Record summary:
The record gives the reactivity of an RNA of 177 nucleotides to 2A3 and DMS. It was measured as part of the RMDB library M2PK50. Conditions: 150 mM KOAc, 10 mM MgCl2 and 150 mM bicine (pH 8.5), 24 C. DMS adducts were read by reverse transcription with MarathonRT.
RNA sequence: GGGAACGACUCGAGUAGAGUCGAAAAUUGAACGGAUUCGUCCGUUCAACGCGUGCGAUCCAAACGUAGUACAAAAGUACAGACCAAAGCACAAGGAUCAAAUGAUACAGCCGUUCGCGGCUGUAAAAAGCAAAAUACUAUUCGUAGUAUUUUGCUUAAAAGAAACAACAACAACAAC
Reactivity to 2A3 in 0.01 (KOAc 150mM, MgCl2 10mM, bicine 150mM(pH8.5), 24C), signal-to-noise 7, nucleotides 027 to 126: u010u020g000a000a000c000g000g010a010u030u060c180g050u000c040c000g000u000u000c000a000a010c020g020c010g010u040g020c050g000a010u010c010c000a040a030a030c070g050u050a030g010u020a050c030a030a300a050a040g020u010a000c010a030g090a060c030c030a110a070a030g070c020a080c040a130a090g010g010a010u020c020a010a050a070u170g050a030u020a050c010a000g000c020c010g020u040u110c220g000c010g090g000c000u000g000u010a010a010a000
Reactivity to DMS in 0.01 (KOAc 150mM, MgCl2 10mM, bicine 150mM(pH8.5), 24C), signal-to-noise 9, nucleotides 027 to 126: u010u000g010a000a000c010g010g000a030u000u010c200g030u000c010c000g010u000u000c000a010a020c170g010c050g010u000g010c060g010a020u000c010c020a090a130a060c050g010u000a080g020u000a020c030a060a060a080a130g010u000a010c030a080g000a210c050c050a070a080a090g010c110a040c120a090a110g000g010a020u000c020a100a070a110u010g000a220u000a010c000a000g000c000c000g020u000u010c210g020c010g010g010c000u000g000u000a000a030a070